Source: RMDB library ARCHII, as collected in RNAgym. This 207-nucleotide RNA was probed chemically with DMS and 2A3. The RNA was probed in 150 mM KOAc, 10 mM MgCl2 and 150 mM bicine (pH 8.5) at 24 C. For DMS, 7,141 sequencing reads were counted. Values cover nucleotides 27 to 156. DMS adducts were read by reverse transcription with MarathonRT. For 2A3 the reverse transcriptase was SuperScript II with manganese.

RNA sequence: GGGAACGACUCGAGUAGAGUCGAAAAAAAUGCUACUCAGUCUGAUAUGGACGUCGCGCACGGCAAAAGAUGGGAUAUUGAGCUCCCAUCAUACACUUCUAAAUUGUCGGGAACGACCUGGAAGGGACUUGCGUUCCUUCCAAAAGGCUUUGGUUACCAUGAUUAGCUAGUUCGCUAGCUAAUCAUGAAAAGAAACAACAACAACAAC
Reactivity to DMS in 0.01 (KOAc 150mM, MgCl2 10mM, bicine 150mM(pH8.5), 24C), signal-to-noise 4, nucleotides 027 to 156: a080a020a030u000g020c000u010a020c010u000c040a080g010u000c020u010g010a170u000a070u010g010g000a140c110g010u010c010g020c070g030c030a120c020g020g020c020a060a050a090a160g000a030u000g010g030g020a070u000a300u010u010g000a270g030c190u000c000c000c010a030u000c020a070u000a070c100a110c130u000u000c110u000a050a060a170u000u000g010u000c010g030g010g030a060a090c010g000a030c000c050u000g010g010a030a020g010g020g000a010c010u000u000g020c300g000u000u010c010c000u000u000c010c000a000a010a070a080g010g010c030u000u000u000g020g000u010u010a160c100
Reactivity to 2A3 in 0.01 (KOAc 150mM, MgCl2 10mM, bicine 150mM(pH8.5), 24C), signal-to-noise 8, nucleotides 027 to 156: a000a000a020u120g010c000u010a020c000u000c010a010g020u000c010u040g100a120u070a120u300g070g030a050c050g020u010c020g000c000g010c040a040c030g010g000c010a000a020a020a070g000a000u010g000g000g010a020u030a100u150u260g050a070g060c030u000c000c010c010a000u000c000a000u040a000c050a010c040u140u150c050u180a090a160a140u060u020g010u010c000g000g000g020a030a060c010g010a020c000c040u030g000g000a010a000g010g000g010a000c010u090u230g030c070g010u000u010c000c000u010u010c000c000a000a010a000a010g020g000c000u070u050u100g040g000u040u030a030c040